Description:
This 177-nucleotide RNA was probed chemically with 2A3 and DMS.

RNA sequence: GGGAACGACUCGAGUAGAGUCGAAAAGAUAUGGAAGGUGGGACAUGCUCAGUGGGUCGGAAACGACCCAAUGAGCAACAGCCCACUUCCUAAGUCAAAGAAGGCAUUAGUUCGCUAAUGCCUUCAACUAGUAGCACAUGUUCGCAUGUGCUACUAGAAAAGAAACAACAACAACAAC
Reactivity to 2A3 in 0.01 (KOAc 150mM, MgCl2 10mM, bicine 150mM(pH8.5), 24C), signal-to-noise 2, nucleotides 027 to 126: g020a010u090a040u090g040g000a060a050g280g090u090g040g000g030a040c090a140u070g020c020u000c000a020g010u000g030g000g010u000c000g000g060a060a080a080c000g000a000c000c010c010a000a000u010g010a000g020c000a000a000c020a000g010c000c010c000a000c000u000u010c000c000u000a030a020g040u020c060a010a070a250g010a000a010g000g020c000a000u000u020a030g010u060u110c300g010c190u000a020a000u000g000c000c000u000u000c000a000a000
Reactivity to DMS in 0.01 (KOAc 150mM, MgCl2 10mM, bicine 150mM(pH8.5), 24C), signal-to-noise 3, nucleotides 027 to 126: g000a010u000a300u010g000g010a000a010g040g010u000g000g030g010a030c100a220u000g000c000u000c000a020g000u010g000g000g030u000c000g010g010a050a080a190c010g000a010c000c000c000a000a010u000g000a020g020c000a020a040c200a150g000c010c000c010a010c000u000u000c000c000u000a050a120g000u000c030a090a080a160g000a000a010g000g020c000a010u000u000a010g020u000u020c260g020c000u000a010a000u000g000c010c000u000u000c000a020a110
For DMS, 3,704 sequencing reads were counted. For 2A3, 4,729 sequencing reads were counted. DMS adducts were read by reverse transcription with MarathonRT.